RNA sequence: GGGAACGACUCGAGUAGAGUCGAAAACUCGCUCAAACAUACAGAGAUGUUGUGCGAAAUGAAUCUCUCUGCAUUAGAAUGGUCGAAGAAUCAGCGGCAAUUCGAGACCCAAUUAGAAGCCGCAUUAACAGCUUUGGAACACGCCUUGCUGACGUGAGCUAUAUCACCCAUUCGUGGGUGAUAUAGCAAAAGAAACAACAACAACAAC
Reactivity to DMS in 0.01 (KOAc 150mM, MgCl2 10mM, bicine 150mM(pH8.5), 24C), signal-to-noise 2, nucleotides 027 to 156: c040u000c060g010c040u000c050a110a080a060c080a050u020a160c040a060g000a080g000a050u000g020u000u010g000u020g030c080g010a060a210a140u010g010a160a110u000c160u000c020u000c020u000g000c030a090u000u000a080g020a050a120u010g030g040u000c010g000a180a110g020a070a080u010c050a110g010c060g060g000c010a050a080u000u000c030g010a300g000a160c020c030c060a070a130u000u000a160g000a070a160g010c000c020g050c130a220u000u000a080a060c020a080g010c040u000u000u000g020g010a150a160c000a060c070g000c000c000u000u000g010c090u010g000a020c000g010u000g000a220
Reactivity to 2A3 in 0.01 (KOAc 150mM, MgCl2 10mM, bicine 150mM(pH8.5), 24C), signal-to-noise 5, nucleotides 027 to 156: c020u000c010g010c010u030c020a160a070a080c010a030u160a070c050a060g130a010g020a060u020g010u040u020g010u020g010c020g030a050a010a110u210g040a060a060u050c040u000c010u000c020u120g050c030a110u090u140a110g110a190a110u120g040g000u000c030g020a080a010g000a020a040u040c070a050g000c000g000g000c010a010a010u000u010c010g010a010g000a070c010c000c020a070a150u160u110a070g060a170a000g040c000c010g010c010a010u040u070a040a080c020a000g040c050u130u110u180g050g030a100a030c020a020c080g040c000c000u060u060g010c020u020g020a020c020g030u030g040a030
Structure probing data (DMS and 2A3) for a 207-nucleotide construct. For 2A3, 3,036 sequencing reads were counted. Source: RMDB library OK3TST, as collected in RNAgym. For DMS, 2,911 sequencing reads were counted. The reactions ran in a buffer of 150 mM KOAc, 10 mM MgCl2 and 150 mM bicine (pH 8.5), at 24 C.